[RMDB]
Structure probing data (DMS and 2A3) for a 177-nucleotide construct.
Values cover nucleotides 27 to 126.
The data come from the RNA Mapping Database (RMDB), library OK1LIB.
For DMS the reverse transcriptase was MarathonRT.
RNA sequence: GGGAACGACUCGAGUAGAGUCGAAAAGAGCUGGUCUUCAAGAAGGUAUCGUCGAUGGCUUGAAAGAGGACCUGAGACAUUACGCCGACCAACCGUCCUUCAGUGACUUCCGAGUGGAGUUCAAACGAUUAUCGCUGUUGUUCGCAACAGCGAUAAUAAAAGAAACAACAACAACAAC
Reactivity to DMS in 0.01 (KOAc 150mM, MgCl2 10mM, bicine 150mM(pH8.5), 24C), signal-to-noise 3, nucleotides 027 to 126: g020a100g050c030u010g000g000u000c000u000u050c150a060a090g000a130a200g000g000u000a020u010c090g030u030c050g000a170u010g000g000c010u000u000g000a040a100a140g010a030g030g010a080c010c060u000g000a300g020a100c050a070u000u000a050c080g020c070c040g000a050c040c020a040a070c060c020g010u010c030c020u010u070c050a030g000u040g000a050c020u010u000c020c010g000a110g040u030g000g050a070g000u000u010c050a100a100a100c200g010
Reactivity to 2A3 in 0.01 (KOAc 150mM, MgCl2 10mM, bicine 150mM(pH8.5), 24C), signal-to-noise 4, nucleotides 027 to 126: g080a010g000c040u030g010g020u050c000u120u100c100a080a100g120a050a050g070g000u080a030u110c060g070u000c000g020a000u100g040g020c000u060u120g130a100a090a040g070a070g020g020a040c000c000u070g030a070g010a020c020a050u040u140a030c110g030c020c010g020a020c010c010a010a020c000c030g110u050c010c000u010u070c020a070g030u040g180a010c000u000u010c000c020g110a060g010u300g060g050a030g020u060u010c060a080a000a130c060g050